Structure probing data (2A3 and DMS) for a 177-nucleotide construct. The reactions ran in a buffer of 150 mM KOAc, 10 mM MgCl2 and 150 mM bicine (pH 8.5), at 24 C. High DMS reactivity at an A or C suggests that its Watson-Crick edge is free. For DMS the reverse transcriptase was MarathonRT. 2A3 adducts were read by reverse transcription with SuperScript II with manganese.
[RMDB]
RNA sequence: GGGAACGACUCGAGUAGAGUCGAAAAAGGUGGUGCCCUUACAAUCAGACUUCAAGUACAUACACUGUGUGGCUAGUAUGUUCGCUCACAAUGGAUAAUGCCAUGUCAAGGUGCAACAAUUGAAUCAGUUCUCAGGUCUAUUCGUAGACCUGAGAACAAAAGAAACAACAACAACAAC
Reactivity to 2A3 in 0.01 (KOAc 150mM, MgCl2 10mM, bicine 150mM(pH8.5), 24C), signal-to-noise 2, nucleotides 027 to 126: a000g030g000u050g000g000u030g000c010c000c020u070u040a120c040a060a090u130c050a040g050a040c000u030u010c070a080a010g000u050a100c010a040u180a020c050a050c130u040g040u020g000u040g140g000c010u000a010g040u110a150u200g040u030u030c000g010c000u010c000a030c050a080a010u070g000g040a000u110a220a060u170g000c020c040a000u010g060u070c070a100a020g090g010u060g000c020a070a070c020a050a100u130u120g070a030a040u060c040a090
Reactivity to DMS in 0.01 (KOAc 150mM, MgCl2 10mM, bicine 150mM(pH8.5), 24C), signal-to-noise 2, nucleotides 027 to 126: a080g000g020u010g000g020u000g010c020c000c010u020u000a060c130a050a100u010c090a080g000a050c050u000u000c070a040a090g030u000a040c120a100u010a150c030a080c080u000g020u000g060u000g000g020c030u010a130g000u000a080u000g020u010u000c070g000c060u000c070a030c130a150a080u010g000g000a070u010a050a090u010g000c020c010a050u010g030u000c070a050a040g010g020u000g030c030a030a080c100a090a110u020u000g000a030a120u010c050a100